RNA sequence: GGGAACGACUCGAGUAGAGUCGAAAAUGGUUAUUUAGUGAACCUGAUCUAGAGAGGGGUGUCAUUACUCCCGUCUGCUGGGAUACCGGCGAUCUCACAUUAUCCACGCCCAUCUUCGCCAAUCCGAGACACGCAAACUUUAAACAGAUAUUGGUUCCACGACAUAAUCGUUCGCGAUUAUGUCGUGAAAAGAAACAACAACAACAAC
Reactivity to 2A3 in 0.01 (KOAc 150mM, MgCl2 10mM, bicine 150mM(pH8.5), 24C), signal-to-noise 4, nucleotides 027 to 156: u070g030g010u140u070a120u120u140u110a150g010u050g030a020a040c000c040u010g010a020u040c040u050a040g010a000g010a060g060g010g020g000u040g030u080c080a070u080u190a070c020u020c040c020c000g120u020c040u070g090c020u040g000g000g040a030u080a150c020c090g000g000c030g030a060u010c020u000c080a060c010a060u080u130a010u100c030c010a040c080g040c000c010c000a020u010c040u080u040c010g000c020c020a030a050u020c020c010g090a020g030a070c050a010c050g040c070a060a120a030c020u080u120u300a090a140a010c080a030g080a050u120a110u160u100g030g010u080u050c050
Reactivity to DMS in 0.01 (KOAc 150mM, MgCl2 10mM, bicine 150mM(pH8.5), 24C), signal-to-noise 1, nucleotides 027 to 156: u000g020g010u010u010a040u000u020u000a120g000u020g000a140a050c020c020u000g010a150u000c070u010a130g000a080g000a020g000g000g040g050u020g020u010c160a170u000u000a080c050u000c000c020c030g000u000c030u000g040c040u000g020g000g020a150u000a050c060c050g060g020c020g010a030u000c030u000c060a050c040a130u000u000a150u010c010c040a100c050g000c000c010c040a120u000c020u000u020c010g010c000c000a080a110u000c010c000g020a150g030a090c050a030c040g020c020a020a080a070c040u000u000u000a060a060a120c010a120g010a170u000a040u000u000g000g010u000u000c000